[RMDB]
Conditions: 150 mM KOAc, 10 mM MgCl2 and 150 mM bicine (pH 8.5), 24 C.
Structure probing data (2A3 and DMS) for a 177-nucleotide construct.
The DMS profile rests on 5,150 reads.
It was measured as part of the RMDB library OK1LIB.
DMS adducts were read by reverse transcription with MarathonRT.
RNA sequence: GGGAACGACUCGAGUAGAGUCGAAAAGAAAAUAAAAUAGUCUUCACAUUCGAAAUAGGAGAAGCGAGCGUGACCGUUGUGUGUCCUGUACACGUCAUGUAUGUGAGACGAAAGAAAGAAAGAAAAAGGGAAUACUAUCUUUCGAGAUAGUAUUCCCAAAAGAAACAACAACAACAAC
Reactivity to 2A3 in 0.01 (KOAc 150mM, MgCl2 10mM, bicine 150mM(pH8.5), 24C), signal-to-noise 4, nucleotides 027 to 126: g050a000a070a030a010u300a030a060a020a090u150a010g040u000c030u120u120c040a010c010a040u130u120c060g080a110a110a160u230a190g050g100a120g060a130a060g040c050g010a010g010c000g020u050g000a030c000c100g050u160u100g030u000g000u020g060u030c000c030u040g020u050a010c010a010c020g060u030c000a020u070g060u070a020u050g010u020g010a030g000a000c060g030a050a000a000g110a010a020a000g060a020a110a010g100a030a050a000a040a040
Reactivity to DMS in 0.01 (KOAc 150mM, MgCl2 10mM, bicine 150mM(pH8.5), 24C), signal-to-noise 3, nucleotides 027 to 126: g030a050a080a050a070u060a080a040a070a040u010a110g010u000c010u030u000c000a030c020a050u000u020c050g000a080a070a090u030a110g030g030a130g000a100a110g020c050g000a120g020c030g000u000g000a040c140c110g020u040u010g000u010g010u000g020u040c010c000u000g000u040a050c040a040c000g000u020c040a060u030g020u020a040u020g020u000g000a020g000a020c020g020a130a100a160g010a080a100a100g010a030a110a070g020a050a050a080a110a100